[RMDB]
RNA sequence: GGGAACGACUCGAGUAGAGUCGAAAACACAAAAGGAUGCUUUGACUUGUGUGAUGAAGUGCUGUGGUGGUCUUUAAACAGCCUCCUUCUCUAGUGUCCUUAAGAGGGGCUUUGAUGAACAGAGACGUUAUUCUCUAUAGCUCUCAGGAAGAUGCUGUGUGGUAUUCUAGUUCGCUAGAAUACCACAAAAAGAAACAACAACAACAAC
Reactivity to 2A3 in 0.01 (KOAc 150mM, MgCl2 10mM, bicine 150mM(pH8.5), 24C), signal-to-noise 3, nucleotides 027 to 156: c080a000c010a010a110a010a010g010g000a030u060g000c030u110u100u090g070a100c030u100u060g030u020g010u020g100a060u060g040a070a000g030u030g070c060u030g010u030g040g050u020g010g000u030c030u040u130u080a090a090a000c000a020g010c010c020u060c000c000u090u060c050u000c000u030a010g010u010g020u070c030c000u040u050a070a020g090a050g040g020g000g000c000u090u050u070g130a110u080g010a050a020c030a080g010a000g010a030c000g020u070u050a090u150u040c030u000c000u040a050u040a060g000c000u000c000u000c020a010g000g040a010a030g010a040u100g000c050u040g030
Reactivity to DMS in 0.01 (KOAc 150mM, MgCl2 10mM, bicine 150mM(pH8.5), 24C), signal-to-noise 2, nucleotides 027 to 156: c050a100c050a040a060a110a090g010g010a080u000g000c050u010u000u010g020a130c040u000u010g030u010g010u010g010a120u000g000a100a070g040u010g020c020u000g020u000g020g000u000g030g020u000c030u000u030u000a080a120a110c030a080g010c010c000u010c020c000u000u030c030u000c040u000a070g040u010g000u010c000c000u000u000a060a110g040a200g000g000g040g000c020u010u000u000g010a120u020g030a060a110c080a080g010a100g030a050c080g020u000u000a130u010u000c000u010c010u010a050u000a080g020c020u000c010u000c010a120g010g010a070a060g010a140u000g000c010u030g010